Record summary:
Structure probing data (DMS and 2A3) for a 177-nucleotide construct. 2A3 adducts were read by reverse transcription with SuperScript II with manganese. For DMS, 2,689 sequencing reads were counted. It was measured as part of the RMDB library OK2TRN.

RNA sequence: GGGAACGACUCGAGUAGAGUCGAAAAGGCGAGCGGCGUGCGCAGCGCGUAGCGGCUCGUCGGCACGGUGUCGAUGGUCUCCUUGGCGCUGAAUCGCGACGUGCUGGCGAUCACCCGGGCAAGCCGAGUUUUCAUUCCAGUUCGCUGGAAUGAAAACAAAAGAAACAACAACAACAAC
Reactivity to DMS in 0.01 (KOAc 150mM, MgCl2 10mM, bicine 150mM(pH8.5), 24C), signal-to-noise 2, nucleotides 027 to 126: g030g010c010g010a250g030c020g010g020c130g030u020g020c050g020c030a070g000c030g040c000g010u000a080g010c060g000g010c050u000c000g010u000c000g020g010c010a020c060g020g020u000g010u010c030g010a090u000g010g020u000c020u000c090c020u000u020g010g010c050g030c060u010g020a080a040u000c030g000c020g010a040c010g020u000g000c000u000g010g010c000g010a060u000c090a080c060c020c000g010g020g020c060a110a250g020c000c010g010a170
Reactivity to 2A3 in 0.01 (KOAc 150mM, MgCl2 10mM, bicine 150mM(pH8.5), 24C), signal-to-noise 2, nucleotides 027 to 126: g040g010c020g020a040g030c040g060g000c060g060u010g000c120g020c130a070g020c030g000c010g030u020a030g080c040g030g000c020u020c020g000u010c000g010g010c000a000c020g090g000u120g050u220c070g110a150u180g130g090u080c050u040c020c080u110u240g060g060c010g030c020u040g070a050a050u020c030g000c020g020a050c010g000u010g020c010u030g050g050c010g000a030u080c050a040c030c000c000g080g030g000c030a050a030g000c010c000g010a030